[RMDB]
RNA sequence: GGGAACGACUCGAGUAGAGUCGAAAAGACAGAAGUUCGCUUCUGUCAAAAAAUCCUAAGUCGACGUUUGACGGAGCGAACUACUCUGUAUCGGAAACGAUAUUUGUAGAGCGCUCCCGAGUCGAUAUGGAAAAAAAGUGCGACUUCGGUCGCACAAUGUGAGACAAUACUUCGGUAUUGUCUCACAAAAAGAAACAACAACAACAAC
Reactivity to DMS in 0.01 (KOAc 150mM, MgCl2 10mM, bicine 150mM(pH8.5), 24C), signal-to-noise 1, nucleotides 027 to 156: g000a080c000a010g000a030a050g040u000u000c300g050c000u010u000c030u000g040u000c000a020a010a050a240a050a110u000c000c000u000a140a200g000u000c030g010a020c000g020u000u000u000g030a150c100g010g000a030g000c000g020a020a130c010u000a000c010u000c180u020g020u000a000u000c020g010g000a300a060a220c000g000a030u000a010u000u010u000g010u000a020g000a180g040c000g000c000u000c010c000c000g020a060g020u020c010g040a040u010a120u040g000g020a000a000a110a130a060a130a220g010u000g010c000g000a010c010u000u000c300g020g030u000c010g010c000a000c000a000a030
Reactivity to 2A3 in 0.01 (KOAc 150mM, MgCl2 10mM, bicine 150mM(pH8.5), 24C), signal-to-noise 2, nucleotides 027 to 156: g010a010c000a000g000a000a000g030u030u070c100g070c100u000u020c000u020g000u000c000a000a000a000a000a000a000u040c030c000u050a140a010g040u000c000g020a010c020g010u010u300u300g030a040c000g000g000a000g020c000g010a080a020c010u020a010c010u060c080u100g020u010a000u000c000g030g020a070a020a090c010g010a010u010a010u010u210u070g020u010a020g010a000g040c010g000c000u030c020c000c000g000a010g030u000c000g010a000u000a060u110g020g020a060a110a000a000a110a020a060g080u140g000c000g000a000c030u060u130c290g100g000u000c000g020c010a000c000a020a010

Structure probing data (DMS and 2A3) for a 207-nucleotide construct. Reactivities are rounded to 0.1 and cut off at 0 and 3. For 2A3 the reverse transcriptase was SuperScript II with manganese. As a SHAPE reagent, 2A3 marks flexible, mostly unpaired nucleotides at the ribose 2'-OH.